[RMDB]
RNA sequence: GGGAACGACUCGAGUAGAGUCGAAAAGGCCAGGCUCGACGCCGAAGCCGCAGGAGGACCCCGUGGGUGUCGCGCCUUCGGCCAGCGUCGAGGUGCUGGGGUCCGAGCCGGCCGCCACGCUAGCGCAAGACUCGUAUCUUUUCGAAGAUACGAGUCUAAAAGAAACAACAACAACAAC
Reactivity to 2A3 in 0.01 (KOAc 150mM, MgCl2 10mM, bicine 150mM(pH8.5), 24C), signal-to-noise 4, nucleotides 027 to 126: g070g030c050c040a050g030g010c010u000c020g000a000c020g000c040c010g050a050a030g030c020c020g000c010a010g010g080a040g010g040a010c000c010c000c010g180u240g110g020g010u160g010u050c020g030c080g020c060c000u040u050c000g000g000c000c000a010g000c020g000u030c020g000a030g000g020u070g100c010u030g000g020g020g000u020c050c010g000a010g020c010c000g030g000c020c000g030c010c010a050c040g020c040u100a060g030c040g000c140a040
Reactivity to DMS in 0.01 (KOAc 150mM, MgCl2 10mM, bicine 150mM(pH8.5), 24C), signal-to-noise 1, nucleotides 027 to 126: g000g010c010c000a080g000g000c000u030c030g000a030c090g010c030c030g000a090a220g020c040c000g000c060a050g010g010a060g000g000a010c000c010c000c060g020u000g020g020g030u000g010u000c000g030c060g020c130c010u020u030c000g000g020c020c080a080g000c010g020u000c000g000a000g000g010u020g020c000u030g020g000g020g080u010c000c000g040a160g000c050c000g010g000c010c020g010c050c050a050c160g000c030u030a070g000c060g030c080a100
Structure probing data (2A3 and DMS) for a 177-nucleotide construct. For 2A3 the reverse transcriptase was SuperScript II with manganese. As a SHAPE reagent, 2A3 marks flexible, mostly unpaired nucleotides at the ribose 2'-OH. The reactions ran in a buffer of 150 mM KOAc, 10 mM MgCl2 and 150 mM bicine (pH 8.5), at 24 C.